[RMDB]
RNA sequence: GGGAACGACUCGAGUAGAGUCGAAAAACCUUUGUGCUGCUUGUCAGUGCCUGAACUACUUCCCCGCCGGUGCCCAUUGGGCACUGGCGGAGCGAAGCAGGCACUUGGAUUUAGCAGCACUCUGGUAAAGGUAAAGGAGGUUCGCCUCCUUUACCAACUUCGCUUAGAAGUUCGCUUCUAAGCGAAGAAAAGAAACAACAACAACAAC
Reactivity to 2A3 in 0.01 (KOAc 150mM, MgCl2 10mM, bicine 150mM(pH8.5), 24C), signal-to-noise 1, nucleotides 027 to 156: a000c010c000u030u030u010g000u000g000c000u000g010c000u020u030g020u000c000a000g010u000g020c000c010u020g010a040a030c040u100a030c030u300u000c010c010c000c000g050c010c000g000g000u010g000c100c030c050a300u300u300g050g000g010c040a000c000u000g000g010c000g000g000a000g010c100g010a000a000g010c000a000g000g050c020a000c000u030u030g000g000a030u210u200u300a000g000c010a000g070c010a000c010u000c010u010g000g010u070a180a120a120g020g000u000a010a000a000g000g010a020g000g070u050u120c070g080c010c000u000c000c000u000u000u000a000c000c000a010a000